RNA sequence: GGGAACGACUCGAGUAGAGUCGAAAAACAUGUCCUGAACUGUGUCUCUGCAGUCGCUGACAAGGCAGCCUAUCUCCAGAGUCUGAACUCUGCAGACCUACUCAAAGCCCUCUGCUACCCUAGGGUCAAGGUUGGCAAUGAGUAUGUCACCAAAGGACCUACCGAUUAGCUUCGGCUAAUCGGUAGGAAAAGAAACAACAACAACAAC
Reactivity to 2A3 in 0.01 (KOAc 150mM, MgCl2 10mM, bicine 150mM(pH8.5), 24C), signal-to-noise 2, nucleotides 027 to 156: a000c080a110u040g060u020c000c020u020g030a110a080c030u030g020u040g060u160c040u040c070u190g000c000a050g020u040c050g060c100u030g040a070c090a140a060g090g000c020a020g040c000c040u070a090u080c040u030c070c010a030g000a000g060u000c070u160g080a040a040c020u030c010u040g070c000a000g000a010c000c020u000a000c000u010c000a000a030a020g030c000c000c000u020c000u010g000c000u090a030c000c010c010u110a160g100g020g010u070c050a080a060g040g000u030u020g010g000c000a000a070u010g000a000g010u000a040u040g040u000c010a040c030c010a140a060a030g070g020a030

Structure probing data (2A3) for a 207-nucleotide construct. Source: RMDB library OK3TST, as collected in RNAgym.